RNA sequence: GGGAACGACUCGAGUAGAGUCGAAAAGAAAUUACGUAUCCUUUACACUUCUCAAACCGGGAUCAAGAGAAGCAAAGCAUCCCUCAUAUCCACGAUGGAGGGUGUCGUGGAGUAUACUGUACCAAAAAGAGCGAACACGGCUUCGGCCGUGUUCGAAGUUGGUAUGGGACUUCGGUCCCAUACCAACAAAAGAAACAACAACAACAAC
Reactivity to 2A3 in 0.01 (KOAc 150mM, MgCl2 10mM, bicine 150mM(pH8.5), 24C), signal-to-noise 1, nucleotides 027 to 156: g040a030a050a030u110u000a010c010g010u020a000u020c010c000u000u050u000a040c040a020c000u010u000c010u040c010a030a210a250c100c060g130g040g110a070u100c070a140a000g000a010g010a050a010g060c020a030a080a000g010c030a070u200c020c010c000u030c020a110u040a060u120c130c070a070c210g030a010u080g030g040a010g000g000g000u000g040u010c010g000u000g000g010a010g000u000a000u000a010c070u130g040u070a070c000c030a030a060a080a040a000g110a040g050c000g010a000a000c000a000c000g000g050c010u000u100c110g040g000c010c000g000u000g000u000u010c000g000a000a000